Conditions: 150 mM KOAc, 10 mM MgCl2 and 150 mM bicine (pH 8.5), 24 C. The record gives the reactivity of an RNA of 177 nucleotides to 2A3 and DMS.

[RMDB]
RNA sequence: GGGAACGACUCGAGUAGAGUCGAAAAGAUGACGAGUCAGGUCGGGCUCCGCGGUGGGUUUGGUCGCCCAUGGGACGGAGAUAUGGAAAGGGUCUCGUACGCUGUAAGACUAACUUCGGUUGAGCUUGCCUCUACUAGAAUUCGUUCUAGUAGAGGCAAAAGAAACAACAACAACAAC
Reactivity to 2A3 in 0.01 (KOAc 150mM, MgCl2 10mM, bicine 150mM(pH8.5), 24C), signal-to-noise 6, nucleotides 027 to 126: g080a060u090g020a010c030g010a000g020u050c020a010g020g080u070c020g000g070g000c010u010c020c020g010c010g030g010u020g000g010g000u020u080u110g080g010u060c060g020c010c000c010a020u040g050g040g060a030c020g050g010a010g020a040u130a080u100g070g020a090a020a050g050g010g020u010c010u010c030g030u040a060c050g000c040u040g040u100a080a030g010a010c020u050a090a050c020u140u080c060g060g010u020u030g010a020g030c020u000u010
Reactivity to DMS in 0.01 (KOAc 150mM, MgCl2 10mM, bicine 150mM(pH8.5), 24C), signal-to-noise 2, nucleotides 027 to 126: g000a110u030g000a020c000g010a100g000u010c010a060g010g000u010c020g000g000g000c010u000c020c000g040c020g020g070u000g010g000g000u010u020u000g040g020u040c210g000c030c010c020a040u000g010g000g050a150c010g010g000a060g010a040u040a090u030g000g000a080a020a130g010g020g010u010c000u000c030g000u010a050c070g040c010u000g000u000a050a080g000a030c050u000a060a050c040u000u000c100g010g000u000u020g020a140g000c070u000u010
It was measured as part of the RMDB libraries RFM100 and RFMREP.
For DMS the reverse transcriptase was MarathonRT.
Values are in units of 0.01, from 0 to 300, in steps of 10.